[RMDB]
RNA sequence: GGGAACGACUCGAGUAGAGUCGAAAAUUUAAGAGCGUAGAUGUCUCUGUCACGAUACGAGUAAGUGACUCUCGUGUACUACUGACGAAUGAGACAGAGACAUUUAUGCUCAGUGUCACUCAAGGAAAUGCCAGUUUACAUUCGUGUAAACUGGCAUAAAAGAAACAACAACAACAAC
Reactivity to DMS in 0.01 (KOAc 150mM, MgCl2 10mM, bicine 150mM(pH8.5), 24C), signal-to-noise 2, nucleotides 027 to 126: u000u010u040a080a150g010a020g020c000g050u000a000g010a010u000g000u000c000u000c000u000g010u000c010a160c090g010a090u020a050c010g010a110g010u000a030a140g010u000g010a040c070u000c200u010c180g010u010g010u000a040c040u000a080c080u000g060a170c060g000a080a030u010g000a070g010a030c010a010g000a020g000a010c000a020u000u000u010a020u000g020c000u000c010a040g030u010g000u020c070a090c110u000c050a090a110g010g030a080a110
Reactivity to 2A3 in 0.01 (KOAc 150mM, MgCl2 10mM, bicine 150mM(pH8.5), 24C), signal-to-noise 1, nucleotides 027 to 126: u080u130u110a230a060g010a000g000c000g020u010a000g010a010u010g000u020c000u000c000u000g010u000c000a000c060g070a030u030a090c010g030a010g020u000a140a070g030u060g210a060c000u000c010u010c060g160u210g010u020a050c010u010a030c000u050g090a060c080g090a120a060u160g010a070g000a110c020a010g010a010g030a000c010a000u000u010u000a000u010g020c020u000c000a010g000u000g000u010c040a040c050u080c020a050a020g180g060a100a240